[RMDB]
Chemical mapping of a 207-nucleotide RNA with 2A3 and DMS. For DMS, 7,055 sequencing reads were counted. Conditions: 150 mM KOAc, 10 mM MgCl2 and 150 mM bicine (pH 8.5), 24 C. In probing experiments dimethyl sulfate is read out at A N1 and C N3, which are open when not base-paired. For 2A3 the reverse transcriptase was SuperScript II with manganese.
RNA sequence: GGGAACGACUCGAGUAGAGUCGAAAAAUACAAGGGGAGGUUUCGGCCAAAUGUUGUAUGCAGAAAGCGUGAGGAAGGUAGCACUUAGACACUCACGAGUAGCGGUUCGGCAGUAGUGCUGAAAUGAGACAGUACGAAAAGUUCGCUUUUCGUACAACCUUAGGCUUUAAUUCGUUAAAGCCUAAGGAAAAGAAACAACAACAACAAC
Reactivity to 2A3 in 0.01 (KOAc 150mM, MgCl2 10mM, bicine 150mM(pH8.5), 24C), signal-to-noise 4, nucleotides 027 to 156: a000u160a020c060a030a050g030g000g000g020a040g020g020u010u070u070c060g030g000c040c020a060a080a060u100g010u050u060g030u040a060u110g030c010a020g110a100a120a010g040c010g020u020g020a010g030g040a090a030g050g000u060a030g030c020a020c090u040u070a050g010a070c040a000c070u020c000a010c020g020a030g040u060a010g040c040g000g060u080u050c020g020g000c020a030g020u200a010g050u030g040c010u010g000a030a040a040u070g000a020g020a030c090a070g000u000a000c000g000a000a000a000a000g010u010u050c100g030c120u000u000u000u000c000g000u000a000c000a010a000
Reactivity to DMS in 0.01 (KOAc 150mM, MgCl2 10mM, bicine 150mM(pH8.5), 24C), signal-to-noise 3, nucleotides 027 to 156: a080u000a050c050a070a080g020g010g000g010a100g030g010u000u000u000c040g040g000c000c050a070a070a140u000g000u000u000g020u000a090u000g030c020a130g010a070a060a110g010c030g030u000g010a080g000g020a100a100g000g040u000a130g020c100a110c030u000u010a120g030a110c060a110c030u000c020a050c020g000a110g010u010a080g010c040g000g000u000u000c020g010g030c010a060g020u000a110g020u000g000c010u000g010a020a030a050u000g010a150g020a130c060a100g010u000a000c010g010a010a020a020a030g020u000u010c300g040c010u000u000u000u000c000g020u000a000c000a040a060

Reactivities are rounded to 0.1 and cut off at 0 and 3.